Chemical mapping of a 177-nucleotide RNA with DMS and 2A3. Reactivities are given for positions 27 through 126. Reactivities are rounded to 0.1 and cut off at 0 and 3. For 2A3 the reverse transcriptase was SuperScript II with manganese. For 2A3, 3,157 sequencing reads were counted.
RNA sequence: GGGAACGACUCGAGUAGAGUCGAAAAGAUAUGGAAGCACACAGCUUUUGACGCGAAAGGGUUCGGAAACGAACCUUUCGCGAUAAGCUGGUGCUUCCUAAGUCAAACUCCACCCUUCGGGGUGGAGCGAAGGAGUAAGCUUCGGCUUACUCCUUCGAAAAGAAACAACAACAACAAC
Reactivity to DMS in 0.01 (KOAc 150mM, MgCl2 10mM, bicine 150mM(pH8.5), 24C), signal-to-noise 2, nucleotides 027 to 126: g010a030u010a300u010g000g000a030a010g010c000a010c010a110c010a010g010c000u000u010u000u000g030a220c080g020c000g010a010a010a030g000g010g020u010u000c010g010g010a070a050a150c000g000a010a030c000c010u000u000u000c000g030c000g020a030u010a000a010g020c000u000g000g000u000g000c000u000u000c000c000u000a000a060g010u000c020a120a130a300c000u010c000c000a010c010c000c000u000u020c220g030g000g000g010u000g010g000a000g020
Reactivity to 2A3 in 0.01 (KOAc 150mM, MgCl2 10mM, bicine 150mM(pH8.5), 24C), signal-to-noise 2, nucleotides 027 to 126: g010a020u030a030u090g000g000a010a000g000c000a010c010a000c010a040g020c040u070u220u190u300g300a260c050g000c000g020a000a010a040g250g120g110u160u000c010g020g050a030a080a050c010g010a000a000c000c010u000u010u010c000g020c000g020a010u010a010a000g000c000u010g020g020u000g010c000u000u000c000c010u000a000a010g000u000c000a060a050a100c010u000c000c000a000c000c010c000u050u130c300g170g010g030g000u020g010g020a000g010